[RMDB]
RNA sequence: GGGAACGACUCGAGUAGAGUCGAAAAUGAAAGCCUGAUUUGAUUUUCCUAAUUGCAUAAGCUUGUUCUGAUUUGGAUUGAAUCUUGGAAAUAUCCAUAUCGAUUAAUACAGCUGCAAUCGUAUGGGGGCGUAAAUCCUGUUCGCAGGAUUUACGCCAAAAGAAACAACAACAACAAC
Reactivity to 2A3 in 0.01 (KOAc 150mM, MgCl2 10mM, bicine 150mM(pH8.5), 24C), signal-to-noise 1, nucleotides 027 to 126: u110g020a100a030a000g300c140c050u170g060a220u000u000u210g300a210u000u060u190u050c020c000u060a140a000u140u000g110c020a000u050a170a110g000c000u100u110g020u020u000c130u300g060a150u000u110u160g000g000a000u000u080g060a210a120u140c040u110u300g030g060a040a050a070u170a000u040c000c000a000u000a000u000c000g000a000u160u160a020a020u290a030c140a000g000c020u000g030c030a030a000u000c000g050u000a030u290g000g000g000